[RMDB]
The record gives the reactivity of an RNA of 177 nucleotides to 2A3 and DMS. DMS adducts were read by reverse transcription with MarathonRT. DMS (dimethyl sulfate) methylates the pairing face of unpaired adenines and cytosines. The data come from the RNA Mapping Database (RMDB), library OK1LIB. Values are in units of 0.01, from 0 to 300, in steps of 10.
RNA sequence: GGGAACGACUCGAGUAGAGUCGAAAAGCCUGGGUGACAGAGCGAGACCCUGUCUCAAAAAACAAAACAUUUACAUGUAUGUAAAAUGUCCCUAUAUGUAUACUCGAGAACAGGGUUUGGCAAACUAUCUGACGAGAAAUUUCGAUUUCUCGUCAGAAAAAGAAACAACAACAACAAC
Reactivity to 2A3 in 0.01 (KOAc 150mM, MgCl2 10mM, bicine 150mM(pH8.5), 24C), signal-to-noise 3, nucleotides 027 to 126: g060c000c000u060g060g010g000u060g010a060c060a090g200a000g060c020g060a000g000a010c000c000c000u010g010u000c000u000c000a130a150a030a020a000a010c070a000a030a000a000c020a060u030u050u050a010c000a010u140g200u300a060u090g010u060a040a090a060a020u080g040u070c000c020c020u140a130u040a030u190g030u000a070u040a070c200u160c070g020a000g000a080a040c000a010g000g000g000u000u000u030g010g000c000a000a000a000c010u010a060
Reactivity to DMS in 0.01 (KOAc 150mM, MgCl2 10mM, bicine 150mM(pH8.5), 24C), signal-to-noise 1, nucleotides 027 to 126: g000c000c030u020g020g000g000u000g000a040c090a050g070a160g030c000g000a010g000a000c000c010c000u010g000u000c020u000c030a000a010a060a150a110a080c110a050a090a110a060c110a000u000u000u000a000c010a060u030g050u000a070u000g000u000a000a050a040a080u000g000u000c030c030c040u000a130u020a080u000g020u000a070u030a050c190u010c120g040a030g000a050a000c020a050g000g010g000u000u020u000g000g000c020a090a060a070c150u040a050